RNA sequence: GGGAACGACUCGAGUAGAGUCGAAAACCAGAGGCCAAUGGGCAAGAAGAAAAUGGUGAGGCUGUAAAUCAUUUUUAGCCACUGCACUGACCUCUGCAGCUGUUACAAUUACAAAUGCACUACAUGCCCUUUACAACAAGUUCGCUUGUUGUAAAGGAAAAGAAACAACAACAACAAC
Reactivity to 2A3 in 0.01 (KOAc 150mM, MgCl2 10mM, bicine 150mM(pH8.5), 24C), signal-to-noise 6, nucleotides 027 to 126: c000c000a010g030a020g040g010c040c030a090a110u150g050g020g020c050a050a030g090a090a010g040a010a080a000a020u060g000g010u020g020a050g060g080c050u030g050u120a040a060a040u040c020a040u000u020u020u030u090a040g030c040c030a090c070u060g000c020a030c060u020g040a070c000c010u000c010u000g000c010a010g000c010u030g050u120u080a080c110a180a120u150u030a040c020a050a100a030u100g020c030a020c090u150a040c050a070u140g000c000
Reactivity to DMS in 0.01 (KOAc 150mM, MgCl2 10mM, bicine 150mM(pH8.5), 24C), signal-to-noise 6, nucleotides 027 to 126: c030c010a070g010a060g010g000c010c030a050a080u010g010g020g020c050a090a100g020a140a140g000a030a020a030a030u000g010g000u000g020a130g010g000c040u000g010u000a090a130a030u010c050a030u000u010u000u010u000a100g020c070c080a130c090u000g010c050a060c060u010g000a030c010c020u000c030u000g020c030a030g000c130u000g000u000u010a070c160a070a070u000u000a040c120a030a040a120u000g000c030a080c130u000a060c120a120u010g000c100